[RMDB]
RNA sequence: GGGAACGACUCGAGUAGAGUCGAAAACUCGAUGGUAAGCUUCGCGAAAGGUCUUUUAUGUUCUACAAGCGCUUGCUACAGUACGAUGUCAGGAAGAUGCAGGGAGCCAUGAACUACGUCAACAGCUACGUCUCUGGACUGUUCCACGUCUUGCAAGAUUAACCUGUCGUUUCGACGACAGGUUAAUAAAAGAAACAACAACAACAAC
Reactivity to DMS in 0.01 (KOAc 150mM, MgCl2 10mM, bicine 150mM(pH8.5), 24C), signal-to-noise 1, nucleotides 027 to 156: c020u000c050g020a140u000g010g010u010a040a080g030c010u000u000c100g030c110g020a090a150a100g010g030u000c020u000u000u020u000a050u020g020u000u010c000u020a070c000a110a170g020c040g010c070u030u010g000c020u000a050c020a110g040u020a090c060g000a140u000g050u030c070a070g000g010a060a140g040a090u000g020c030a060g020g010g010a150g050c050c020a170u000g010a060a080c030u000a010c080g040u000c030a030a080c060a050g000c040u000a020c040g010u000c070u010c040u010g020g010a050c070u000g030u010u000c030c010a020c130g020u010c040u000u030g000c030a060a130g040
Reactivity to 2A3 in 0.01 (KOAc 150mM, MgCl2 10mM, bicine 150mM(pH8.5), 24C), signal-to-noise 3, nucleotides 027 to 156: c030u050c050g080a070u120g000g060u050a060a040g010c010u060u120c090g020c030g080a130a030a020g030g030u040c060u030u170u080u080a150u200g060u070u050c050u040a090c040a130a060g020c030g020c050u000u030g020c010u050a030c050a040g040u040a030c050g020a030u050g050u110c050a030g070g020a050a010g030a060u080g010c060a040g020g020g060a040g000c020c000a020u080g000a050a030c040u030a020c090g060u030c060a060a040c000a080g040c030u060a010c070g040u020c000u000c000u030g040g010a040c010u030g030u080u030c030c000a030c020g030u000c010u020u040g030c020a050a000g000

Structure probing data (DMS and 2A3) for a 207-nucleotide construct.
For DMS the reverse transcriptase was MarathonRT.
The data come from the RNA Mapping Database (RMDB), library OK3TST.
The reactions ran in a buffer of 150 mM KOAc, 10 mM MgCl2 and 150 mM bicine (pH 8.5), at 24 C.